[RMDB]
The data come from the RNA Mapping Database (RMDB), library RNAMAK. The record gives the reactivity of an RNA of 207 nucleotides to 2A3 and DMS.
RNA sequence: GGGAACGACUCGAGUAGAGUCGAAAAAUUCAAGUUCGCUUGAAUGGGACGGGGUCUUCCUGGGUGAGCCUUUUGACGCUCUGAAGCCUCCACGGAGCGAUAAGGAACUACUCACAGGGAAGACGGAGGCACCCUAGACCGCAGUUUCGACUGCGAACUAAAAUCAACCAUUCGUGGUUGAUUUUAGAAAAGAAACAACAACAACAAC
Reactivity to 2A3 in 0.01 (KOAc 150mM, MgCl2 10mM, bicine 150mM(pH8.5), 24C), signal-to-noise 5, nucleotides 027 to 156: a000u030u010c010a010a010g000u020u100c160g090c160u010u030g030a040a020u070g040g010g060a080c300g140g030g110g010u020c020u020u040c020c000u100g080g300g000u010g010a030g020c000c000u050u060u080u200g180a090c070g000c000u000c000u000g020a070a000g010c000c000u000c010c000a010c010g010g010a000g000c020g030a040u100a100a010g020g020a060a060c100u200a110c010u250c000a000c010a000g030g000g000a000a000g000a000c000g000g000a000g000g020c000a040c020c000c000u030a070g090a110c080c020g000c010a000g000u020u080u270c200g110a050c010u010g000c000g010a030a000
Reactivity to DMS in 0.01 (KOAc 150mM, MgCl2 10mM, bicine 150mM(pH8.5), 24C), signal-to-noise 2, nucleotides 027 to 156: a040u000u000c010a040a020g010u010u000c220g030c020u000u000g010a040a020u000g010g000g020a160c090g000g020g030g000u000c010u010u000c010c000u010g020g050g070u000g020a020g030c030c100u000u000u000u000g020a290c130g010c000u000c000u020g000a040a130g020c020c010u000c020c000a300c030g010g010a040g040c010g000a160u000a040a060g010g010a160a150c100u000a100c040u000c010a060c000a300g000g010g020a050a040g030a000c020g010g020a030g020g030c010a080c000c030c000u010a100g000a100c060c020g040c010a140g000u000u000u000c110g030a170c020u010g010c030g000a050a160

DMS adducts were read by reverse transcription with MarathonRT. 2A3 adducts were read by reverse transcription with SuperScript II with manganese. For 2A3, 4,472 sequencing reads were counted.